[RMDB]
RNA sequence: GGGAACGACUCGAGUAGAGUCGAAAACGCAAAGCUGCAGCGCGGCGCUCUGGAGGCCUUGCCCCGCGCACUGCUCUUUACAUGGCUCGACGUGAGGGCACUUCGCGGGCAGUGCUGCGGCCUCGUGAAACUGCCCCUAAGUUCGCUUAGGGGCAAACUACGGAUUUGAAUUCGUUCAAAUCCGUAGAAAAGAAACAACAACAACAAC
Reactivity to 2A3 in 0.01 (KOAc 150mM, MgCl2 10mM, bicine 150mM(pH8.5), 24C), signal-to-noise 2, nucleotides 027 to 156: c030g020c010a040a020a010g000c000u010g000c000a000g020c010g010c030g220g050c100g060c060u040c070u150g160g040a040g000g050c010c080u070u130g010c020c010c010c010g030c020g000c010a010c030u010g020c000u020c020u100u170u110a110c080a130u180g120g010c040u070c160g170a190c030g040u020g020a180g010g000g010c000a020c010u020u010c030g030c050g040g020g030c000a010g010u000g010c000u020g000c000g000g000c000c000u010c010g000u020g020a080a050a060c050u040g000c000c000c000c000u000a010a010g010u030u110c180g060c170u010u000a000g000g000g000g010c000a000a000a000
Reactivity to DMS in 0.01 (KOAc 150mM, MgCl2 10mM, bicine 150mM(pH8.5), 24C), signal-to-noise 1, nucleotides 027 to 156: c050g000c040a020a020a080g000c020u000g100c000a070g000c010g020c030g000g060c100g010c000u000c050u000g120g000a120g000g020c040c060u000u000g030c020c010c000c000g000c030g020c060a170c060u000g000c010u000c080u110u000u000a090c090a140u000g000g020c090u000c070g030a080c050g030u000g010a200g010g010g010c000a040c040u000u000c030g000c140g040g030g040c030a080g030u010g000c000u000g020c020g000g010c040c000u000c060g030u000g000a160a060a110c050u000g030c000c000c010c010u000a050a020g000u000u000c300g000c010u010u000a010g030g050g000g030c000a000a000a060